[RMDB]
RNA sequence: GGGAACGACUCGAGUAGAGUCGAAAAGUUAGUAUUGGGCAUUUAAUAGCUGUGUGAUUUUGAAGCAUUUAAUCUCUUUAUGCCUUCGUUUCUUCAUCUAUAAAAUGAGGAUAUUCUUGCAUUCAUAGAGUCGAUUAGGAGGAUUGAGAUAUGAACAACCACCUCACCUGUUCGCAGGUGAGGUGGUAAAAGAAACAACAACAACAAC
Reactivity to 2A3 in 0.01 (KOAc 150mM, MgCl2 10mM, bicine 150mM(pH8.5), 24C), signal-to-noise 1, nucleotides 027 to 156: g020u000u140a010g000u020a160u160u080g030g000g000c020a020u000u020u180a120a030u090a150g050c150u060g030u000g000u000g100a130u060u070u020u210g070a080a020g000c000a000u000u190u120a300a240u030c090u040c000u010u190u070a160u160g010c010c010u050u000c000g010u110u160u000c000u000u010c000a080u050c020u060a080u050a150a260a120a150u000g020a020g020g030a000u010a090u250u160c140u030u030g070c020a000u100u000c020a000u030a000g000a000g080u010c000g060a030u000u070a010g170g000a000g000g000a000u060u020g000a020g010a010u030a130u150g050a020a030c100a050